[RMDB]
RNA sequence: GGGAACGACUCGAGUAGAGUCGAAAAAUAGUUUUCCAGAUAUGGGAAUUUAUUACGAGUGUCCCCAUGUCGGGUGUACUAUGAAAACAAAGAGUCGCAAGGAAUACAUAGCUCACAGGAAAACGCACAUAGUCGGAUCGUUCGCGAUCCGACUAUGAAAAGAAACAACAACAACAAC
Reactivity to 2A3 in 0.01 (KOAc 150mM, MgCl2 10mM, bicine 150mM(pH8.5), 24C), signal-to-noise 2, nucleotides 027 to 126: a000u110a000g000u000u000u000u000c010c010a030g010a030u030a000u000g030g000g090a040a030u090u130u130a210u300u140a130c130g040a060g220u190g070u040c010c030c000c000a010u000g020u030c000g060g140g000u020g000u000a000c000u000a000u000g000a010a080a060a000c020a030a080a020g130a060g140u100c020g160c120a020a010g070g000a070a000u030a150c000a000u050a000g000c010u010c030a010c020a000g000g000a000a030a000a000c000g000c010a070
Reactivity to DMS in 0.01 (KOAc 150mM, MgCl2 10mM, bicine 150mM(pH8.5), 24C), signal-to-noise 1, nucleotides 027 to 126: a180u010a170g000u000u010u010u010c000c000a130g000a070u020a000u010g000g000g000a140a000u000u000u050a100u100u050a170c300g000a030g030u020g000u000c080c050c000c040a030u000g000u000c040g010g000g020u000g000u020a190c020u000a000u000g050a030a090a060a080c110a000a130a280g030a150g050u010c130g010c180a070a110g000g000a040a040u040a070c000a000u000a130g000c050u000c000a000c000a300g000g010a010a110a060a000c080g000c190a160
An RNA of 177 nucleotides, treated with 2A3 and DMS and read out base by base. Conditions: 150 mM KOAc, 10 mM MgCl2 and 150 mM bicine (pH 8.5), 24 C. In probing experiments dimethyl sulfate is read out at A N1 and C N3, which are open when not base-paired.